[RMDB]
RNA sequence: GGGAACGACUCGAGUAGAGUCGAAAACUACCGGGUUACUUGGCAGGAAAUAAGACUUAAGGUAACUGGUUUCCAAAAGGCCUGUUGGUCGGCAUGAUGGAAAUAAGAUUUUCAAAUAGACACAACUAAGUAUGUAGAACGCUUUGUAGAGGACUUUACUAGAAUGUUUGUUCGCAAACAUUCUAGUAAAAGAAACAACAACAACAAC
Reactivity to 2A3 in 0.01 (KOAc 150mM, MgCl2 10mM, bicine 150mM(pH8.5), 24C), signal-to-noise 2, nucleotides 027 to 156: c020u040a040c020c010g020g020g010u000u000a010c000u030u070g070g000c030a020g120g080a140a160a200u170a170a000g110a090c030u120u040a060a050g040g000u030a010a010c000u010g030g000u010u020u060c010c000a030a060a060a060g000g010c010c010u030g030u030u010g000g000u000c000g000g010c000a010u020g010a030u000g030g020a000a000a080u070a020a060g080a120u160u190u150u220c050a000a010a010u000a010g000a000c000a000c010a280a000c040u040a090a000g090u090a120u240g080u090a100g090a240a040c050g060c080u040u110u050g090u060a070g000a090g090g000a010c010u010u040u000